[RMDB]
RNA sequence: GGGAACGACUCGAGUAGAGUCGAAAACGAAAUCUUUAGUAAUGUCAACCAAAGUUUUACCUUCGAAUUCCUUCAAUUGAGUGAAGGCGUAUUCAUCAAUUGGGUCGGUCAAGAACAAAACCUCGAAGGCCUAUAUCACUUUCGAGUGAUAUAGGCCAAAAGAAACAACAACAACAAC
Reactivity to 2A3 in 0.01 (KOAc 150mM, MgCl2 10mM, bicine 150mM(pH8.5), 24C), signal-to-noise 2, nucleotides 027 to 126: c040g020a050a000a000u100c110u060u130u170a140g000u060a080a160u200g060u100c050a000a040c070c040a090a000a000g000u050u010u050u150a030c030c040u000u020c050g070a150a230u050u040c020c000u010u020c000a010a020u100u070g000a160g210u130g000a010a000g050g070c070g010u080a130u010u000c000a000u000c000a010a050u060u020g030g000g000u020c020g050g000u000c060a140a000g040a050a080c160a050a050a000a040c000c060u090c190g050a090a000
Reactivity to DMS in 0.01 (KOAc 150mM, MgCl2 10mM, bicine 150mM(pH8.5), 24C), signal-to-noise 1, nucleotides 027 to 126: c250g020a020a010a120u000c000u040u070u000a090g000u000a040a030u000g000u050c250a080a120c070c030a000a000a000g000u060u000u000u000a070c060c090u000u000c020g010a020a290u000u000c000c030u030u030c000a010a260u000u000g070a130g150u000g000a000a080g020g060c190g080u020a010u000u000c020a060u000c000a000a060u060u000g000g030g000u000c020g000g000u030c120a030a120g000a000a090c150a160a090a150a020c110c020u070c070g000a080a080
Structure probing data (2A3 and DMS) for a 177-nucleotide construct.
The reactions ran in a buffer of 150 mM KOAc, 10 mM MgCl2 and 150 mM bicine (pH 8.5), at 24 C.
It was measured as part of the RMDB library OK1LIB.
DMS adducts were read by reverse transcription with MarathonRT.